[RMDB]
RNA sequence: GGGAACGACUCGAGUAGAGUCGAAAAUUAUUAUUCCAUUCAUGCUGCAACUGGAAAUAAAUUGAUUGUUCAUAAUAUGGACAUGUUGCAUUUUAAACACAUCGUGGCAUCUAAUAUGGUGCAAGGCAUUAGUCCGAUUGAUGUGUUGAAGAAUACAGCCCAUUUAUUAGUUCGCUAAUAAAUGGGCAAAAGAAACAACAACAACAAC
Reactivity to DMS in 0.01 (KOAc 150mM, MgCl2 10mM, bicine 150mM(pH8.5), 24C), signal-to-noise 3, nucleotides 027 to 156: u000u010a100u000u010a110u010u000c010c000a100u000u020c030a130u000g030c100u000g020c090a110a200c160u000g010g020a060a060a130u010a070a080a140u000u000g000a150u000u000g010u000u000c010a030u010a100a150u010a300u000g010g030a010c030a160u010g000u010u010g020c030a070u000u010u000u010a090a060a060c010a020c000a010u000c000g050u000g010g010c030a000u000c000u000a130a150u010a120u010g010g010u010g020c020a160a070g050g000c030a270u010u000a130g010u010c010c000g000a190u000u000g010a020u010g020u000g010u010u000g010a050a110g000a080a080u010a050c120a190
Reactivity to 2A3 in 0.01 (KOAc 150mM, MgCl2 10mM, bicine 150mM(pH8.5), 24C), signal-to-noise 6, nucleotides 027 to 156: u050u050a040u100u050a060u060u040c000c010a030u070u130c070a060u160g100c030u040g000c040a040a030c030u090g050g100a060a040a080u150a030a070a090u150u130g050a080u130u030g020u040u000c010a010u040a260a060u110a160u190g000g020a000c010a040u090g010u010u010g000c000a000u000u040u030u090a040a030a000c000a000c000a000u000c020g050u070g120g000c010a000u010c020u110a250a190u140a190u300g010g000u000g040c030a040a090g020g000c040a080u110u180a070g040u100c010c010g020a050u040u180g000a000u010g000u000g000u000u010g000a030a030g010a060a020u160a060c050a030